[RMDB]
RNA sequence: GGGAACGACUCGAGUAGAGUCGAAAAGAUAUGGAUCUGUCCCAAACACUGAUGACCAAGAUCGGAAACGAUCUUGCAAGGUGUGGGCAGAUCCUAAGUCAAACAUCCUGUGUUCGCACAGGAUGAAGUAUUAUGCUUGGUUCGCCAAGCAUAAUACAAAAGAAACAACAACAACAAC
Reactivity to DMS in 0.01 (KOAc 150mM, MgCl2 10mM, bicine 150mM(pH8.5), 24C), signal-to-noise 9, nucleotides 027 to 126: g010a030u010a300u010g000g010a000u000c000u000g000u020c010c000c230a100a210a150c050a010c010u000g010a090u020g010a250c300c000a000a010g010a000u000c000g020g000a120a110a180c000g010a000u000c000u000u000g000c020a040a050g010g040u010g020u000g010g010g000c010a000g000a000u000c000c000u000a010a050g000u010c030a130a120a240c010a010u000c000c000u000g020u000g010u000u010c280g020c010a010c000a000g000g000a000u000g000a020a100
Reactivity to 2A3 in 0.01 (KOAc 150mM, MgCl2 10mM, bicine 150mM(pH8.5), 24C), signal-to-noise 9, nucleotides 027 to 126: g020a020u050a040u140g000g000a000u000c000u040g300u300c000c030c030a030a260a010c070a000c010u300g060a300u130g010a180c050c010a010a000g010a010u010c010g030g020a030a070a030c020g000a010u010c000u000u000g020c010a080a180g030g010u050g000u030g040g000g000c000a000g000a000u000c000c000u000a000a000g000u000c030a050a070a110c000a010u000c000c000u010g010u000g030u030u090c300g030c120a000c000a000g020g010a000u000g000a010a000